[RMDB]
RNA sequence: GGGAACGACUCGAGUAGAGUCGAAAAGUUGAAGUGUUCGCACUUCAACAAACGCUCAACUGAUGGAGCGCAAGACGAAUAGCUACAUAUUCGACAUGAGAAAAAGACUGUAGUUCGCUACAGUCAACAAUAUUCUGUUGUUCGCAACAGAAUAUUGAAAAGAAACAACAACAACAAC
Reactivity to DMS in 0.01 (KOAc 150mM, MgCl2 10mM, bicine 150mM(pH8.5), 24C), signal-to-noise 8, nucleotides 027 to 126: g020u000u000g000a000a010g020u010g010u000u010c220g020c000a010c000u000u010c000a000a010c000a050a070a150c020g000c000u000c000a100a090c110u000g000a080u000g000g000a010g000c000g020c120a090a090g010a100c030g000a010a000u000a010g010c170u010a110c180a110u000a010u000u000c010g020a130c060a070u000g000a070g000a100a080a080a110a150g010a010c000u000g000u000a000g000u000u010c200g000c000u000a000c000a010g010u000c000a030a080
Reactivity to 2A3 in 0.01 (KOAc 150mM, MgCl2 10mM, bicine 150mM(pH8.5), 24C), signal-to-noise 8, nucleotides 027 to 126: g000u000u000g000a000a000g010u020g030u050u150c190g050c060a000c000u000u010c000a000a000c000a000a020a000c010g000c000u010c010a040a170c110u230g060a090u150g110g010a010g000c020g000c110a100a020g080a030c020g000a010a010u020a030g050c080u220a090c090a200u050a040u020u020c010g020a020c040a080u170g030a100g100a060a100a010a030a010g000a000c010u000g000u000a000g000u030u060c170g000c050u000a000c000a000g000u000c010a000a000

The data come from the RNA Mapping Database (RMDB), library M2PK50. An RNA of 177 nucleotides, treated with DMS and 2A3 and read out base by base. 2A3 is a SHAPE reagent: it acylates the 2'-hydroxyl of flexible nucleotides of all four kinds. For 2A3, 18,219 sequencing reads were counted. For DMS the reverse transcriptase was MarathonRT.